About this RNA:
This 207-nucleotide RNA was probed chemically with DMS and 2A3. The reactions ran in a buffer of 150 mM KOAc, 10 mM MgCl2 and 150 mM bicine (pH 8.5), at 24 C. For DMS, 2,680 sequencing reads were counted. The 2A3 profile rests on 4,272 reads. It was measured as part of the RMDB library M2RFPK.
RNA sequence: GGGAACGACUCGAGUAGAGUCGAAAACUCCACGCUGGGUAAUGGACGACGGCGGCGUGUGGCGAACAGGGAUACCGGUAGUCAGUGUCUGGAACAUCCCAAGGGGCGUCGGAGCUAGCACCCCGACAAAACGGGCACAAGUUCGCUUGUGCCCGAAGUCUUGUUAAUACUUCGGUAUUAACAAGACAAAAGAAACAACAACAACAAC
Reactivity to DMS in 0.01 (KOAc 150mM, MgCl2 10mM, bicine 150mM(pH8.5), 24C), signal-to-noise 1, nucleotides 027 to 156: c010u010c020c010a060c060g030c020u000g000g010g030u040a060a070u000g020g000a070c010g010a090c050g040g000c070g010g040c030g000u010g040u000g020g030c100g010a060a050c070a140g040g000g000a110u000a100c050c000g000g000u010a130g040u010c040a070g000u020g000u010c030u000g020g020a100a060c120a150u010c000c000c010a100a140g010g000g020g050c110g020u010c000g050g010a060g030c000u000a160g010c070a090c040c000c000c000g000a020c040a030a040a120a150c030g020g000g050c030a040c010a040a010g020u000u030c300g020c000u000u000g010u030g000c050c000c000g000a000a010
Reactivity to 2A3 in 0.01 (KOAc 150mM, MgCl2 10mM, bicine 150mM(pH8.5), 24C), signal-to-noise 4, nucleotides 027 to 156: c010u010c000c000a020c020g040c020u060g000g000g090u160a140a120u110g060g040a020c040g020a010c040g040g040c020g030g020c010g020u070g020u040g020g040c050g020a060a050c070a120g020g010g000a020u050a120c010c030g020g030u060a040g060u050c050a040g050u020g040u130c040u060g010g010a050a050c010a110u040c020c000c000a050a080g030g010g010g000c030g000u020c040g010g010a030g000c000u010a010g010c020a050c010c010c000c010g010a020c060a000a090a040a020c020g000g000g000c010a000c000a000a010g020u060u100c160g030c120u000u000g000u000g010c010c010c000g000a000a000